[RMDB]
Chemical mapping of a 177-nucleotide RNA with 2A3 and DMS. For DMS, 1,968 sequencing reads were counted. Source: RMDB library OK2TRN, as collected in RNAgym. For 2A3 the reverse transcriptase was SuperScript II with manganese. For 2A3, 2,824 sequencing reads were counted. The reactions ran in a buffer of 150 mM KOAc, 10 mM MgCl2 and 150 mM bicine (pH 8.5), at 24 C.
RNA sequence: GGGAACGACUCGAGUAGAGUCGAAAAGAAAGGCAGCCAUUGCAGCCCACGGAGCCAGUCGAUGCAUGCUUUUGCAUGCCGCCCACGACUGAGGGCAGCUGCGGCACUGAGGGCAGCUGCCGAAAGACGUAGCAGUAUGCUUCGGCAUACUGCUACGAAAAGAAACAACAACAACAAC
Reactivity to 2A3 in 0.01 (KOAc 150mM, MgCl2 10mM, bicine 150mM(pH8.5), 24C), signal-to-noise 3, nucleotides 027 to 126: g040a040a100a010g010g000c000a000g000c040c040a150u140u300g030c040a030g040c000c000c000a030c000g010g000a010g020c000c020a020g030u090c040g100a040u190g000c000a000u010g000c010u180u230u260u300g000c020a000u010g010c000c030g030c000c010c000a070c050g290a080c090u200g050a160g000g000g000c010a030g000c010u070g030c030g050g000c040a020c080u080g030a080g020g020g000c010a020g000c000u000g000c030c010g000a000a000a000g080a000
Reactivity to DMS in 0.01 (KOAc 150mM, MgCl2 10mM, bicine 150mM(pH8.5), 24C), signal-to-noise 2, nucleotides 027 to 126: g010a050a140a160g010g000c000a030g020c010c170a110u030u020g010c210a200g000c020c000c020a090c020g010g000a120g040c020c010a050g020u000c060g000a080u000g020c020a000u000g010c000u000u020u020u020g030c000a010u000g000c000c110g010c000c010c050a180c080g000a110c120u000g030a100g000g000g020c000a120g010c050u000g010c080g010g000c070a040c030u000g000a040g010g010g030c010a110g020c030u000g010c000c000g000a040a050a070g020a180